An RNA of 177 nucleotides, treated with 2A3 and DMS and read out base by base. Reactivities are given for positions 27 through 126. Reactivities are rounded to 0.1 and cut off at 0 and 3. Conditions: 150 mM KOAc, 10 mM MgCl2 and 150 mM bicine (pH 8.5), 24 C.
RNA sequence: GGGAACGACUCGAGUAGAGUCGAAAAGAAGAGAAAGGAGACACAUGGACAGUCUCCAGAGGUUCCUAAGGCCUCGAUCGCGCCUGCCGGGAAUCAUGGACCCCCGGUUGUCCAUGAAAGAAGAAGACCUAGUAUCCAGGUUCGCCUGGAUACUAGGAAAAGAAACAACAACAACAAC
Reactivity to 2A3 in 0.01 (KOAc 150mM, MgCl2 10mM, bicine 150mM(pH8.5), 24C), signal-to-noise 4, nucleotides 027 to 126: g080a010a010g100a000g080a060a110a050g030g000a030g010a000c040a000c010a090u040g020g020a030c010a020g010u010c010u000c020c000a000g000a010g000g030u040u150c040c030u090a110a050g030g000c000c010u020c060g040a100u110c050g010c030g010c030c010u020g000c030c000g000g030g000a040a020u100c070a050u170g050g010a050c030c000c000c000c000g050g000u050u030g000u000c000c000a000u030g150a080a100a020g140a050a010g090a030a020g020a020
Reactivity to DMS in 0.01 (KOAc 150mM, MgCl2 10mM, bicine 150mM(pH8.5), 24C), signal-to-noise 4, nucleotides 027 to 126: g000a060a080g010a100g020a100a120a190g040g000a000g020a030c030a090c100a040u000g000g000a030c030a060g020u000c010u010c000c000a030g030a090g010g000u000u000c040c050u040a090a060g020g000c000c000u000c160g010a110u020c100g000c190g000c020c010u000g010c080c050g010g010g010a070a040u020c050a060u030g000g000a070c080c070c010c030c070g000g030u000u010g000u010c000c030a000u000g010a050a090a080g000a100a100g010a140a120g000a180